[RMDB]
An RNA of 177 nucleotides, treated with 2A3 and read out base by base. Conditions: 150 mM KOAc, 10 mM MgCl2 and 150 mM bicine (pH 8.5), 24 C.

RNA sequence: GGGAACGACUCGAGUAGAGUCGAAAAAAGUUCUUCAGCUAAGGCUUUUGCAUUUUUAGCAACUUGUACCUGAUAUUCUUUAAACUCAUCACUUAAAGCUUCUUUAAAGCAAACUGCCUUAGAAGCAAGUCACCCUGGAUUUCGAUCCAGGGUGACUAAAAGAAACAACAACAACAAC
Reactivity to 2A3 in 0.01 (KOAc 150mM, MgCl2 10mM, bicine 150mM(pH8.5), 24C), signal-to-noise 1, nucleotides 027 to 126: a000a000g050u030u050c020u190u110c060a000g020c010u040a000a210g000g000c000u020u000u000u170g040c190a290u000u000u000u200u000a060g070c030a060a030c000u020u040g130u020a000c020c060u000g110a060u050a160u160u150c130u020u210u170a070a050a070c030u010c090a000u020c020a040c060u020u060a080a030a000g070c010u020u000c000u000u090u050a120a000a000g030c000a000a000a170c030u000g030c040c000u000u000a000g010a060a000g000c010a000